[RMDB]
This 177-nucleotide RNA was probed chemically with 2A3 and DMS. The 2A3 profile rests on 9,582 reads. The reactions ran in a buffer of 150 mM KOAc, 10 mM MgCl2 and 150 mM bicine (pH 8.5), at 24 C. DMS adducts were read by reverse transcription with MarathonRT.

RNA sequence: GGGAACGACUCGAGUAGAGUCGAAAAAAGAUAUGGAGAGCUGGAGCGAAGGUGGCGACGAAGUAUCGUCGGAAACGACGAUACAGAGCCACAGCAGCACUCGCGUUGAAAGCUCUCCUAAGUCAAACUAGUAACAGUACUUCGGUACUGUUACUAGAAAAGAAACAACAACAACAAC
Reactivity to 2A3 in 0.01 (KOAc 150mM, MgCl2 10mM, bicine 150mM(pH8.5), 24C), signal-to-noise 2, nucleotides 027 to 126: a040a000g070a040u100a030u100g000g000a000g000a000g010c020u040g030g050a030g000c000g010a090a040g150g000u010g000g000c030g060a300c050g030a120a010g000u000a000u010c000g000u000c000g000g000a010a050a070c000g010a010c010g000a000u010a010c000a000g010a000g000c000c010a010c030a020g110c080a010g060c010a090c030u020c000g010c010g040u110u050g050a100a040a000g010c010u000c000u000c000c000u010a060a000g030u000c020a060a050a130
Reactivity to DMS in 0.01 (KOAc 150mM, MgCl2 10mM, bicine 150mM(pH8.5), 24C), signal-to-noise 6, nucleotides 027 to 126: a100a070g000a050u000a300u000g010g000a000g010a020g030c000u010g000g010a110g040c000g010a060a110g010g000u000g020g010c000g000a130c240g010a130a090g010u000a010u000c000g030u000c000g000g010a060a070a190c010g020a010c000g000a020u000a000c000a020g000a250g010c000c000a010c010a110g020c120a100g010c180a300c080u000c020g010c010g020u000u010g010a170a170a060g000c000u010c000u000c000c000u000a000a140g010u000c030a080a130a200